[RMDB]
RNA sequence: GGGAACGACUCGAGUAGAGUCGAAAACUGCCGCCGGGACGCAGUGAUCCUCACAGGGUCGCACGGUCGCCUCGGGUCGGCCUCGUGUCGGCUCGACCUGCGAGGGGAGCGAGUGGCGAGCCCGACCAAAACUUUCUCGCCUUCGGGCGAGAAAGAAGCACAGGUAUUAGUUCGCUAAUACCUGUGCAAAAGAAACAACAACAACAAC
Reactivity to 2A3 in 0.01 (KOAc 150mM, MgCl2 10mM, bicine 150mM(pH8.5), 24C), signal-to-noise 2, nucleotides 027 to 156: c000u010g020c000c030g080c030c050g040g040g080a020c010g000c020a080g070u010g030a050u000c000c000u080c010a010c040a030g010g000g080u110c040g000c040a060c120g110g060u010c060g040c080c040u030c000g020g000g000u000c000g020g020c020c000u070c080g240u300g100u070c010g030g000c080u090c060g020a040c000c020u050g040c040g030a010g000g000g030g010a060g030c000g020a080g090u100g020g000c000g000a020g050c000c000c000g040a040c050c010a060a130a000a040c010u010u000u000c000u000c000g010c000c000u040u040c190g110g000g000c000g010a000g000a000a000a000g030a000a020
This 207-nucleotide RNA was probed chemically with 2A3. The RNA was probed in 150 mM KOAc, 10 mM MgCl2 and 150 mM bicine (pH 8.5) at 24 C.